[RMDB]
RNA sequence: GGGAACGACUCGAGUAGAGUCGAAAAAUGUCCAAGGUGCUCCUUGGCUCCCACAAGCUCUCCUCCAGCACCCCAUCUUCCCCUGGUUGCCCCUCGGUUCCCCACUUCCCCAGUUUCCCCCGUUACCACCCUAGGAAACAUUCGUGUUUCCUAGGGUAAAAGAAACAACAACAACAAC
Reactivity to 2A3 in 0.01 (KOAc 150mM, MgCl2 10mM, bicine 150mM(pH8.5), 24C), signal-to-noise 2, nucleotides 027 to 126: a000u120g080u060c010c000a010a000g060g020u140g090c050u180c070c000u010u010g020g000c010u040c000c010c010a010c060a000a020g020c010u030c010u010c040c000u010c010c000a010g010c020a020c000c010c020c000a010u010c040u000u020c000c000c000c010u020g060g000u040u080g030c000c000c000c000u010c000g070g000u030u020c000c000c000c000a010c020u030u010c010c010c000c010a010g000u010u010u000c000c000c000c010c000g020u020u030a030c030c020
Reactivity to DMS in 0.01 (KOAc 150mM, MgCl2 10mM, bicine 150mM(pH8.5), 24C), signal-to-noise 3, nucleotides 027 to 126: a080u010g020u020c000c010a030a040g010g020u030g000c290u000c010c010u000u000g000g000c030u000c000c000c000a090c210a100a060g000c070u000c020u000c020c010u000c040c040a100g020c060a130c040c020c020c060a070u020c070u000u010c020c020c000c090u000g000g000u000u000g000c040c010c010c040u000c050g010g010u000u000c030c020c010c050a090c120u000u000c010c000c000c030a090g010u010u000u000c020c000c000c010c000g000u000u010a030c030c020

An RNA of 177 nucleotides, treated with 2A3 and DMS and read out base by base. The 2A3 profile rests on 2,687 reads. DMS adducts were read by reverse transcription with MarathonRT. It was measured as part of the RMDB libraries RFM100 and RFMREP. For 2A3 the reverse transcriptase was SuperScript II with manganese. DMS (dimethyl sulfate) methylates the pairing face of unpaired adenines and cytosines. The reactions ran in a buffer of 150 mM KOAc, 10 mM MgCl2 and 150 mM bicine (pH 8.5), at 24 C.